RNA sequence: GGGAACGACUCGAGUAGAGUCGAAAAGAUAUGGAUUCAAGGCCAUGAACUACUUCCGGGUUCGGAAACGAACCCAGGAAGCAUGGCUAGUUGAAUCCUAAGUCAAAAGCCGACGUUCGCGUCGGCAUCUAUUUGAUUCGUUCGCGAAUCAAAUAGAAAAAGAAACAACAACAACAAC
Reactivity to 2A3 in 0.01 (KOAc 150mM, MgCl2 10mM, bicine 150mM(pH8.5), 24C), signal-to-noise 2, nucleotides 027 to 126: g020a060u130a040u170g000g000a000u000u000c020a020a030g060g000c020c020a010u030g060a080a130c110u260a070c000u240u000c000c010g000g000g000u000u000c030g020g020a060a080a040c010g020a010a010c030c020c020a000g030g000a000a020g000c020a000u000g010g000c000u040a070g170u020u010g010a010a000u000c000c010u010a160a020g050u030c050a050a060a110a090g000c000c000g020a000c010g020u090u130c300g050c010g100u000c000g000g000c000a000
Reactivity to DMS in 0.01 (KOAc 150mM, MgCl2 10mM, bicine 150mM(pH8.5), 24C), signal-to-noise 3, nucleotides 027 to 126: g000a060u000a300u010g020g000a010u000u000c000a070a170g010g000c000c000a000u010g030a110a060c120u020a300c020u000u000c000c020g010g000g000u000u000c000g000g000a100a100a200c000g000a010a010c000c020c000a020g030g010a010a000g000c000a000u000g010g020c000u000a030g000u010u000g000a020a000u000c010c000u000a030a100g000u000c040a120a110a160a140g010c010c000g000a020c010g010u000u010c230g010c010g000u010c010g000g010c010a000

Background: The record gives the reactivity of an RNA of 177 nucleotides to 2A3 and DMS. The RNA was probed in 150 mM KOAc, 10 mM MgCl2 and 150 mM bicine (pH 8.5) at 24 C.